[RMDB]
RNA sequence: GGGAACGACUCGAGUAGAGUCGAAAAGUUAGGACUGCUCCAACCUACUGACAAUUCUACAACUGUUAGUGUUACUGUAUCCAGUAACAUGGUUGAAACUGUUGUGGGUCAACUUGAGCAAACUAAUAGUCUAGGUAAAGUUCGCUUUACCUAGACUAAAAGAAACAACAACAACAAC
Reactivity to 2A3 in 0.01 (KOAc 150mM, MgCl2 10mM, bicine 150mM(pH8.5), 24C), signal-to-noise 3, nucleotides 027 to 126: g010u010u020a010g010g030a070c050u040g000c000u000c020c020a050a040c000c010u030a030c030u020g030a010c030a050a290u120u050c010u050a010c010a020a010c010u030g050u110u050a080g000u020g000u010u000a000c000u010g080u150a130u090c180c000a000g000u010a000a000c000a010u040g010g000u050u120g030a030a020a010c010u030g010u010u010g010u010g000g030g000u030c020a050a040c030u040u090g010a000g000c000a060a090a000c030u020a010a030u030
Reactivity to DMS in 0.01 (KOAc 150mM, MgCl2 10mM, bicine 150mM(pH8.5), 24C), signal-to-noise 3, nucleotides 027 to 126: g000u000u010a040g020g000a150c140u010g010c010u000c020c300a150a040c010c010u000a040c050u010g000a040c010a070a120u010u020c040u010a080c030a010a020c010u000g000u000u000a060g010u000g020u000u000a000c010u000g000u030a120u000c300c010a010g000u010a010a000c000a000u000g010g000u000u010g000a080a160a020c020u000g000u000u000g020u000g020g000g000u000c080a060a060c160u010u000g010a020g000c010a070a090a120c070u000a060a130u010

Notes: The record gives the reactivity of an RNA of 177 nucleotides to 2A3 and DMS. For 2A3 the reverse transcriptase was SuperScript II with manganese. For DMS the reverse transcriptase was MarathonRT. It was measured as part of the RMDB library 15KREP. The reactions ran in a buffer of 150 mM KOAc, 10 mM MgCl2 and 150 mM bicine (pH 8.5), at 24 C. The 2A3 profile rests on 2,842 reads.